[RMDB]
RNA sequence: GGGAACGACUCGAGUAGAGUCGAAAAUAAAGUGUGUUCGGGGAGGUGAAUGCGGGUAAAUGCUUCGCGAUCAGCGGGUGGCCGUGUCUGUACGGAUGCCUGAGGUGCGGAUAUAGCGGUUAAGACCACCUGCUCAGAAGUUCGCUUCUGAGCAGGUAAAAGAAACAACAACAACAAC
Reactivity to DMS in 0.01 (KOAc 150mM, MgCl2 10mM, bicine 150mM(pH8.5), 24C), signal-to-noise 1, nucleotides 027 to 126: u010a080a070a150g040u000g010u000g020u030u010c080g000g020g000g030a110g010g000u000g000a060a080u010g000c090g000g000g020u010a060a070a070u020g010c060u000u000c050g010c020g000a070u000c120a080g050c060g020g020g020u000g000g030c000c000g020u000g000u000c100u000g000u010a050c040g000g000a070u000g040c030c020u010g000a090g000g000u000g000c020g000g000a070u000a070u020a080g030c060g000g000u000u000a050a080g000a130c060c060
Reactivity to 2A3 in 0.01 (KOAc 150mM, MgCl2 10mM, bicine 150mM(pH8.5), 24C), signal-to-noise 1, nucleotides 027 to 126: u150a000a100a000g120u080g000u010g030u050u050c050g010g010g000g030a050g030g030u080g090a110a040u080g050c040g010g000g020u060a060a140a020u130g020c000u090u140c010g000c020g100a120u080c040a020g060c040g000g030g000u030g070g000c030c000g050u050g080u050c030u050g060u080a000c000g010g080a030u090g050c000c010u020g020a050g030g010u090g010c120g030g030a000u160a000u050a190g040c100g040g020u070u110a000a000g010a050c020c000